Structure probing data (DMS and 2A3) for a 177-nucleotide construct. In probing experiments dimethyl sulfate is read out at A N1 and C N3, which are open when not base-paired. For 2A3, 1,288 sequencing reads were counted. Conditions: 150 mM KOAc, 10 mM MgCl2 and 150 mM bicine (pH 8.5), 24 C. It was measured as part of the RMDB libraries RFM100 and RFMREP.
[RMDB]
RNA sequence: GGGAACGACUCGAGUAGAGUCGAAAAGCUCGGGUGGAGCCGUCGGUAACGAAUAUCCUGGCGGUAGUAGCAGCAUAGUCGGGUGAGAAUCCCGACCGCCGGAAGGGCAAGGGUUCCACGGCAAUGUUAAGUGACGUAGUUUCGACUACGUCACUUAAAAAGAAACAACAACAACAAC
Reactivity to DMS in 0.01 (KOAc 150mM, MgCl2 10mM, bicine 150mM(pH8.5), 24C), signal-to-noise 3, nucleotides 027 to 126: g060c020u000c050g000g000g010u000g010g010a140g030c000c020g010u010c050g000g000u040a070a120c100g020a160a130u030a300u000c030c000u020g020g000c000g030g050u000a080g010u050a130g020c140a040g000c170a140u020a110g000u000c010g000g000g000u000g000a130g030a280a160u030c000c000c000g000a010c000c070g020c000c000g010g000a120a060g000g000g010c130a090a170g010g010g010u000u010c020c000a020c060g000g010c030a100a060u050g000u000
Reactivity to 2A3 in 0.01 (KOAc 150mM, MgCl2 10mM, bicine 150mM(pH8.5), 24C), signal-to-noise 2, nucleotides 027 to 126: g060c020u000c020g140g000g020u090g020g000a000g010c000c000g050u030c030g000g070u130a100a140c160g020a080a050u070a080u130c000c040u150g010g000c050g040g000u020a030g020u040a010g080c090a020g010c000a100u080a120g040u000c000g030g000g000u000g020a020g050a010a030u040c000c000c030g000a000c000c000g010c000c010g020g020a090a080g020g000g000c070a090a180g090g020g000u010u030c000c000a000c000g010g010c040a050a060u100g020u140